[RMDB]
RNA sequence: GGGAACGACUCGAGUAGAGUCGAAAAUUGGUAAAGGGCUUAAAGGGUAUUAGCCUGCCAUGUCCAAUGGCAUGAGAGUGUCCCUUGGUAAAGGACUUAAUAGGCAAUAGCCUGCUCUUUUGUCAUGCUAGCGUUCAUGUUUCGACAUGAACGCUAGAAAAGAAACAACAACAACAAC
Reactivity to DMS in 0.01 (KOAc 150mM, MgCl2 10mM, bicine 150mM(pH8.5), 24C), signal-to-noise 2, nucleotides 027 to 126: u040u000g000g010u020a060a160a120g030g000g020c000u010u010a090a140a110g040g010g040u060a100u020u000a040g010c000c010u000g030c000c000a020u000g000u050c000c040a130a020u000g000g000c000a000u000g000a030g000a010g000u000g000u000c000c000c000u000u000g050g000u000a110a220a180g000g000a010c000u000u000a000a000u000a010g000g000c000a010a040u030a010g000c000c000u000g020c000u010c000u000u020u000u000g030u000c000a000u000g000
Reactivity to 2A3 in 0.01 (KOAc 150mM, MgCl2 10mM, bicine 150mM(pH8.5), 24C), signal-to-noise 4, nucleotides 027 to 126: u030u020g010g000u110a140a190a290g100g000g000c020u080u230a130a080a080g260g030g030u260a150u140u050a050g000c000c000u000g000c000c000a020u060g040u000c010c010a040a020u020g000g000c010a010u010g010a000g000a010g000u000g000u020c000c000c000u010u000g030g000u010a020a010a010g000g000a000c000u000u000a010a000u010a010g000g000c010a020a120u180a300g000c000c000u000g000c000u000c000u000u000u000u000g000u000c000a000u030g040

An RNA of 177 nucleotides, treated with DMS and 2A3 and read out base by base. For 2A3, 2,812 sequencing reads were counted. Reactivities are given for positions 27 through 126. For DMS, 4,135 sequencing reads were counted. The data come from the RNA Mapping Database (RMDB), library OK1LIB. 2A3 adducts were read by reverse transcription with SuperScript II with manganese.